[RMDB]
This 177-nucleotide RNA was probed chemically with DMS and 2A3.
For DMS, 2,610 sequencing reads were counted.
For DMS the reverse transcriptase was MarathonRT.
The RNA was probed in 150 mM KOAc, 10 mM MgCl2 and 150 mM bicine (pH 8.5) at 24 C.

RNA sequence: GGGAACGACUCGAGUAGAGUCGAAAAACGGGGUGAUCGACAGGACCACACCGACUGGCUCACGGACCGUGAGAAUCAGCUCGGCCGUCCGACCGCGCUGCGCGUCACCCGGUAGCGUCUCACCGUACAGUCAGGCAAUAUUCGUAUUGCCUGACUGAAAAGAAACAACAACAACAAC
Reactivity to DMS in 0.01 (KOAc 150mM, MgCl2 10mM, bicine 150mM(pH8.5), 24C), signal-to-noise 3, nucleotides 027 to 126: a040c050g000g000g030g010u000g000a010u000c040g020a100c180a150g010g030a010c030c060a130c300a140c010c000g000a030c030u000g000g000c030u000c000a010c000g010g000a140c300c120g000u000g000a020g010a040a050u010c030a040g010c190u000c000g000g050c120c200g000u000c030c030g010a060c130c020g030c050g000c120u010g000c040g030c100g010u010c020a040c010c030c000g010g010u000a050g000c110g000u000c040u000c040a170c090c110g020u010a140
Reactivity to 2A3 in 0.01 (KOAc 150mM, MgCl2 10mM, bicine 150mM(pH8.5), 24C), signal-to-noise 3, nucleotides 027 to 126: a000c030g040g010g010g010u030g020a040u140c070g060a060c050a090g010g000a010c030c010a040c020a010c050c000g010a000c000u010g020g020c000u010c000a010c010g220g160a260c090c130g000u030g000a010g050a010a190u200c000a020g030c140u000c010g010g000c000c020g010u040c000c010g020a010c030c000g020c030g050c110u200g000c080g000c020g050u020c020a000c000c010c030g020g020u020a020g020c030g070u010c020u000c020a090c020c030g040u100a100